[RMDB]
RNA sequence: GGGAACGACUCGAGUAGAGUCGAAAAUCCUAAGUCCUAAGCCUGGGAAUGUAGUGUGAGGGAGUCGGAAACGACGACGAUCUCACAUAUUAUAGCCCAGGAACUACUUAGGAUAUGGAAAAAGGAUAUGACUAUUGUUCGCAAUAGUCAUAUCCAAGUCAAUUGUAGGCUUCGGCCUACAAUUGACAAAAGAAACAACAACAACAAC
Reactivity to 2A3 in 0.01 (KOAc 150mM, MgCl2 10mM, bicine 150mM(pH8.5), 24C), signal-to-noise 2, nucleotides 027 to 156: u010c000c000u000a070a000g010u000c000c030u020a000a000g010c000c000u000g000g060g030a080a120u080g010u020a060g120u010g000u000g010a000g010g000g010a020g000u030c010g030g110a270a190a110c130g130a050c000g020a030c000g020a040u020c000u000c000a000c000a040u010a000u000u060a040u050a020g040c000c000c020a010g000g000a000a000c030u270a000c000u000u000a000g000g000a000u020a040u020g020g040a070a040a040a090a110g030g000a000u040a010u010g000a000c000u010a000u000u000g020u070u080c230g000c110a000a000u000a000g000u000c000a000u000a000u000c000c000a000a010

Chemical mapping of a 207-nucleotide RNA with 2A3. Values cover nucleotides 27 to 156. 2A3 adducts were read by reverse transcription with SuperScript II with manganese.